Chemical mapping of a 177-nucleotide RNA with 2A3 and DMS. For 2A3 the reverse transcriptase was SuperScript II with manganese. The DMS profile rests on 1,038 reads. For 2A3, 1,332 sequencing reads were counted.
RNA sequence: GGGAACGACUCGAGUAGAGUCGAAAAUUACAUCGAGAUCAUGCCGAUGGGCACCAGGGUCGAGCUGAGCAAGUUGGCCGAUGUGGCAUUGGAUAUCGGCCGCAGUGUCGGAUGCUCGGCCUACGAGCACCUCCACCACCUUCGGGUGGUGGAGGUGAAAAGAAACAACAACAACAAC
Reactivity to 2A3 in 0.01 (KOAc 150mM, MgCl2 10mM, bicine 150mM(pH8.5), 24C), signal-to-noise 2, nucleotides 027 to 126: u060u060a010c020a050u020c030g050a010g060a300u220c080a080u220g100c030c010g070a050u040g000g050g000c040a020c040c000a060g060g000g020u000c000g000a010g050c000u040g030a020g020c010a080a020g030u220u240g170g000c010c010g000a010u050g000u050g080g140c120a200u110u270g180g010a000u020a000u100c000g000g000c000c000g000c010a030g070u020g150u240c010g000g050a020u080g000c000u000c010g030g040c010c000u000a000c000g010a020g030
Reactivity to DMS in 0.01 (KOAc 150mM, MgCl2 10mM, bicine 150mM(pH8.5), 24C), signal-to-noise 1, nucleotides 027 to 126: u000u010a150c020a120u000c010g030a130g010a110u000c140a140u000g000c000c010g010a050u000g010g000g050c120a100c050c080a130g000g000g030u000c000g000a020g020c000u000g000a300g000c070a040a040g020u000u040g030g000c000c010g000a030u000g010u000g010g070c180a210u030u000g000g000a020u000a000u000c010g000g010c000c000g000c000a100g020u010g000u020c090g000g000a130u000g000c010u000c000g010g000c010c010u000a000c140g000a070g000